Chemical mapping of a 207-nucleotide RNA with 2A3. Conditions: 150 mM KOAc, 10 mM MgCl2 and 150 mM bicine (pH 8.5), 24 C. The data come from the RNA Mapping Database (RMDB), library OK3TST. The 2A3 profile rests on 439 reads. 2A3 adducts were read by reverse transcription with SuperScript II with manganese.
RNA sequence: GGGAACGACUCGAGUAGAGUCGAAAACUCCAGUCGACUUAUGCACUACGCGACCUCAACAACGUCGCACAGCAGUACAAGCUAUUCCAACAGCAACUGCAAGGUAAGUCAGUCAAGAUCAACAACAAGACUAUUACCGACGAAAGCAUCAACAUCGCCGUGGGGUCUCAUUCGUGAGACCCCACGGAAAAGAAACAACAACAACAAC
Reactivity to 2A3 in 0.01 (KOAc 150mM, MgCl2 10mM, bicine 150mM(pH8.5), 24C), signal-to-noise 1, nucleotides 027 to 156: c090u020c000c100a030g050u060c040g040a040c040u140u100a010u040g020c030a080c040u150a110c150g000c000g040a030c000c000u090c030a100a160c020a040a010c100g020u040c010g020c010a040c000a000g020c000a020g020u160a160c000a230a200g010c000u000a020u300u260c160c090a070a050c040a200g000c020a050a030c000u000g000c010a000a070g050g000u020a000a010g020u130c240a000g010u010c000a020a000g000a200u060c060a060a100c020a110a010c000a080a150g000a010c010u000a000u000u000a040c010c000g030a030c070g080a180a000a000g020c010a030u040c030a000a030c000a120u050c000g010